An RNA of 207 nucleotides, treated with DMS and 2A3 and read out base by base. For 2A3 the reverse transcriptase was SuperScript II with manganese.

RNA sequence: GGGAACGACUCGAGUAGAGUCGAAAAAGCAGUGAGCCUUACUCUGGGGAAUCAGAUAGUUUGACACCAGGACUUUCCAGCUGCCAUCACGGAGGGGCAGGUACAAUAGUUAUCUGGAUGCAUAGUCAUCCUCAUUGUGUUCGAUAUGGUGUGAUUACAUUUAAUAAUGGUUCGCCAUUAUUAAAUGAAAAGAAACAACAACAACAAC
Reactivity to DMS in 0.01 (KOAc 150mM, MgCl2 10mM, bicine 150mM(pH8.5), 24C), signal-to-noise 4, nucleotides 027 to 156: a120g030c000a040g000u000g020a070g010c020c010u000u000a160c030u000c030u000g010g010g030g020a120a100u010c050a080g010a130u000a040g030u010u000u000g000a080c020a040c030c010a070g010g000a030c040u000u010u000c020c020a200g020c090u000g010c040c030a120u000c040a090c040g010g010a110g040g010g010g010c020a010g020g010u000a030c050a130a140u000a120g020u000u000a020u010c010u000g010g010a030u000g010c020a230u010a150g000u010c000a030u000c000c000u000c000a020u010u000g020u000g010u010u000c050g000a140u000a070u000g000g020u010g020u000g010a140u010u000a160
Reactivity to 2A3 in 0.01 (KOAc 150mM, MgCl2 10mM, bicine 150mM(pH8.5), 24C), signal-to-noise 8, nucleotides 027 to 156: a000g010c020a010g000u010g010a010g020c010c010u060u120a060c010u040c010u030g050g010g020g070a030a080u160c020a010g030a070u060a050g000u010u040u060g040a020c020a010c000c010a010g010g010a020c000u050u060u020c030c030a050g030c070u100g040c030c020a100u130c040a040c060g010g020a010g000g010g000g000c000a000g000g010u010a010c050a120a230u140a140g100u160u030a080u020c010u000g010g030a010u000g000c050a150u140a210g030u190c000a000u000c000c000u000c010a000u010u030g010u000g030u090u070c050g030a040u030a120u180g010g020u010g000u010g030a020u080u210a030
Source: RMDB library OK3TST, as collected in RNAgym. DMS adducts were read by reverse transcription with MarathonRT. The DMS profile rests on 15,289 reads.